RNA sequence: GGGAACGACUCGAGUAGAGUCGAAAAGAUGCCAUCGCUUCCAGUGGCGGCCUGGCGCGCGGGGUGGCUACCGGCUUCACCGAACUCGACGAGGUCACCAACGGCCUGCAUCCGGGGCAGAUGGUCACAGUCGACGCUUCUUCGGAAGCGUCGACUGAAAAGAAACAACAACAACAAC
Reactivity to 2A3 in 0.01 (KOAc 150mM, MgCl2 10mM, bicine 150mM(pH8.5), 24C), signal-to-noise 1, nucleotides 027 to 126: g030a080u140g000c000c000a100u050c000g010c030u260u140c020c060a140g000u060g230g000c020g000g030c000c000u000g100g020c060g060c100g000c030g110g060g000g030u010g000g000c000u030a130c020c060g030g000c000u080u060c000a000c040c040g060a170a080c000u000c010g060a080c020g020a090g000g000u000c030a030c010c080a060a120c090g020g000c000c030u120g030c030a000u040c060c080g000g030g000g030c100a100g030a010u060g010g000u030c030a000